[RMDB]
The record gives the reactivity of an RNA of 177 nucleotides to DMS and 2A3. It was measured as part of the RMDB libraries RFM100 and RFMREP. The RNA was probed in 150 mM KOAc, 10 mM MgCl2 and 150 mM bicine (pH 8.5) at 24 C. Values cover nucleotides 27 to 126.
RNA sequence: GGGAACGACUCGAGUAGAGUCGAAAAGUAGAGGACCAACGUGCUACCAUGUAAAGCAACUUCAGACCAUAGUAAUAAGGAAUAAUAUGAAAAAUUGAAAUAUUAUGGUUUGAAGAUGGUUUACAUGUCUAAAUAAAGUAUUCGUACUUUAUUUAGAAAAAGAAACAACAACAACAAC
Reactivity to DMS in 0.01 (KOAc 150mM, MgCl2 10mM, bicine 150mM(pH8.5), 24C), signal-to-noise 5, nucleotides 027 to 126: g020u000a030g020a100g000g010a150c090c070a090a120c110g020u020g010c040u000a040c080c000a010u000g000u000a010a010a010g000c010a020a060c000u000u000c010a000g010a000c010c000a010u010a000g010u000a000a070u010a100a130g000g010a110a090u020a080a080u020a120u030g000a070a070a050a080a060u010u000g000a120a090a060u000a000u000u000a010u000g000g010u000u000u000g010a010a020g010a040u000g000g010u000u000u000a000c000a000u000g010
Reactivity to 2A3 in 0.01 (KOAc 150mM, MgCl2 10mM, bicine 150mM(pH8.5), 24C), signal-to-noise 8, nucleotides 027 to 126: g060u070a020g020a050g050g070a060c040c030a040a050c080g070u130g030c010u010a030c010c000a000u000g000u000a000a000a010g110c000a030a040c000u000u000c000a000g000a000c000c000a000u000a010g030u010a020a080u070a170a120g060g030a070a070u150a170a040u130a180u220g120a100a130a070a060a040u110u090g020a080a050a010u030a000u020u000a000u000g000g000u000u000u010g000a000a000g000a010u010g000g020u000u000u000a000c000a000u000g010